[RMDB]
RNA sequence: GGGAACGACUCGAGUAGAGUCGAAAAGCGCGCUGCUGCGAGCGAGCGAGCGACGGCACAUACACCAGUCUCUCUCUCGCAGAGGCGCUGGUGGUGGUGGUGGUGGUGGUGUAGGGAGGGAGGGAAAGGGAUAAGAUAACUUCGGUUAUCUUAUCCCAAAAGAAACAACAACAACAAC
Reactivity to 2A3 in 0.01 (KOAc 150mM, MgCl2 10mM, bicine 150mM(pH8.5), 24C), signal-to-noise 3, nucleotides 027 to 126: g020c010g000c000g010c080u280g000c000u000g010c050g000a000g000c030g030a010g070c130g010a040g080c060g110a080c010g010g060c210a050c010a160u240a030c040a040c060c030a030g060u000c000u000c000u020c000u000c000u020c030g000c010a000g000a000g030g000c010g000c010u000g010g020u070g020g080u020g020g040u010g000g010u000g020g000u040g020g000u070g000g010u170g060u120a020g030g030g140a100g040g000g100a140g030g010g000a150a010a010
Reactivity to DMS in 0.01 (KOAc 150mM, MgCl2 10mM, bicine 150mM(pH8.5), 24C), signal-to-noise 1, nucleotides 027 to 126: g030c100g020c000g010c080u020g010c030u000g000c040g010a000g000c290g000a000g000c300g000a010g050c160g000a090c100g000g060c150a090c160a190u030a270c110a100c000c000a060g000u000c020u010c000u000c000u000c020u000c000g020c000a040g000a040g000g030c020g040c000u000g010g070u130g000g000u000g010g020u080g050g000u000g000g000u000g010g000u080g000g000u000g000u020a030g000g000g000a170g000g000g010a050g020g040g000a080a100a080